[RMDB]
RNA sequence: GGGAACGACUCGAGUAGAGUCGAAAAUAGGGCUUACGCUUGCGUUUGUCUGUUAUAUCUUGGUGGACGAGUAGUCGCGGUUGGGACUGAGGUGCCUACAACGUGUUUUUGAGUGGGCCUGUGUCUCAUCACAAUCGACUUUCGAGUCGAUUGUGAUAAAAGAAACAACAACAACAAC
Reactivity to DMS in 0.01 (KOAc 150mM, MgCl2 10mM, bicine 150mM(pH8.5), 24C), signal-to-noise 3, nucleotides 027 to 126: u020a070g010g000g000c010u000u000a040c080g010c010u040u000g030c030g010u000u010u000g020u000c040u020g000u010u000a080u020a090u000c030u010u010g030g000u030g000g010a060c020g000a080g010u020a070g010u000c030g010c070g010g000u000u000g010g000g010a050c020u010g000a090g020g010u020g020c010c000u010a070c040a070a150c120g040u030g020u000u000u000u010u010g000a220g030u000g000g000g000c010c050u000g030u000g000u010c000u000c040
Reactivity to 2A3 in 0.01 (KOAc 150mM, MgCl2 10mM, bicine 150mM(pH8.5), 24C), signal-to-noise 3, nucleotides 027 to 126: u120a020g000g020g000c000u030u040a000c020g040c060u060u140g030c040g030u000u000u120g030u020c050u050g070u110u070a120u020a060u170c020u010u080g000g000u050g090g000a050c040g020a060g080u100a040g000u030c020g010c070g050g030u070u090g050g000g000a000c020u090g060a050g120g010u150g030c000c000u060a030c010a080a030c060g140u110g110u070u090u070u110u190g110a070g020u020g000g020g050c000c000u040g060u000g030u060c000u000c030

An RNA of 177 nucleotides, treated with DMS and 2A3 and read out base by base.
The RNA was probed in 150 mM KOAc, 10 mM MgCl2 and 150 mM bicine (pH 8.5) at 24 C.